[RMDB]
RNA sequence: GGGAACGACUCGAGUAGAGUCGAAAAGCUCGGUGACACCGCGUCUGCCUGGGUCCGAAAGAUUUCUUGUCGCAAAUCUACAAGACAUUGGUUAACGUGUGGGCCGCUUGAGCGGCCGCUCGGCGGGUCAUCGGUGGCGCUUCGGUGCUAUCGAUGAAAAAGAAACAACAACAACAAC
Reactivity to 2A3 in 0.01 (KOAc 150mM, MgCl2 10mM, bicine 150mM(pH8.5), 24C), signal-to-noise 6, nucleotides 027 to 126: g020c010u010c010g020g040u060g030a030c020a030c070c020g020c000g040u010c040u050g010c000c000u020g050g000g010u000c010c010g050a080a060a010g020a000u020u040u010c020u040u130g110u090c060g020c110a010a020a060u030c010u020a030c020a080a000g010a010c020a040u020u060g040g010u060u100a050a010c010g010u020g010u080g050g060g000c000c000g010c010u140u250g050a030g030c000g000g020c010c000g000c010u020c010g040g000c010g020g000g000
Reactivity to DMS in 0.01 (KOAc 150mM, MgCl2 10mM, bicine 150mM(pH8.5), 24C), signal-to-noise 5, nucleotides 027 to 126: g010c030u000c020g000g000u000g010a070c070a090c020c020g000c010g020u020c070u010g000c010c000u000g010g000g010u010c000c020g000a120a140a050g000a020u000u000u000c030u020u030g010u020c190g000c170a030a020a040u010c020u000a060c270a150a070g000a020c040a070u000u010g000g020u000u010a090a210c060g000u000g010u020g010g010g000c000c010g030c010u020u040g010a100g010c020g000g000c040c030g000c020u010c030g010g000c010g000g000g010